[RMDB]
Chemical mapping of a 207-nucleotide RNA with DMS and 2A3. The reactions ran in a buffer of 150 mM KOAc, 10 mM MgCl2 and 150 mM bicine (pH 8.5), at 24 C. For DMS the reverse transcriptase was MarathonRT. The 2A3 profile rests on 1,533 reads.

RNA sequence: GGGAACGACUCGAGUAGAGUCGAAAAGCGAGUCCUCGUCGUACUCGAACGCAGCCUCGUGGCUGCUGGGCAAGGUCCUGGAGUCCGUCUACAACGACGGCCGGACGGUCGAUCAGAUCGUCGUGCAAGAGUGGCAGUCCGAGGUCGAUAUGCCGUCCGUCUUCACUUAGUUCGCUAAGUGAAGACGAAAAGAAACAACAACAACAAC
Reactivity to DMS in 0.01 (KOAc 150mM, MgCl2 10mM, bicine 150mM(pH8.5), 24C), signal-to-noise 1, nucleotides 027 to 156: g010c030g000a110g000u020c010c030u000c220g030u010c060g000u010a040c030u000c000g000a120a120c100g060c050a100g010c020c000u000c110g040u000g030g000c000u030g070c000u010g000g000g030c090a070a170g050g000u000c030c040u000g040g030a290g000u000c010c030g000u000c020u000a110c160a090a080c050g000a030c000g000g000c000c020g020g000a040c000g040g050u000c010g010a220u000c130a120g040a100u000c010g020u000c080g000u000g030c000a080a170g000a150g030u010g040g070c000a130g020u000c000c000g060a050g000g030u000c020g060a110u020a070u020g000c030c020g040u000c080
Reactivity to 2A3 in 0.01 (KOAc 150mM, MgCl2 10mM, bicine 150mM(pH8.5), 24C), signal-to-noise 3, nucleotides 027 to 156: g120c040g000a030g050u050c010c050u050c040g150u060c070g030u080a010c020u010c070g030a120a020c060g000c010a010g010c000c000u060c020g070u180g030g000c000u010g000c000u010g000g020g020c070a200a120g070g030u050c000c020u050g080g000a080g080u080c000c000g000u000c000u050a150c120a240a020c100g010a010c000g000g000c050c000g020g000a010c000g000g000u030c000g030a300u180c090a090g000a000u020c010g010u000c040g000u140g060c040a060a050g030a070g130u140g050g000c000a000g000u000c000c010g000a020g020g000u000c010g010a030u060a080u170g030c020c040g040u110c030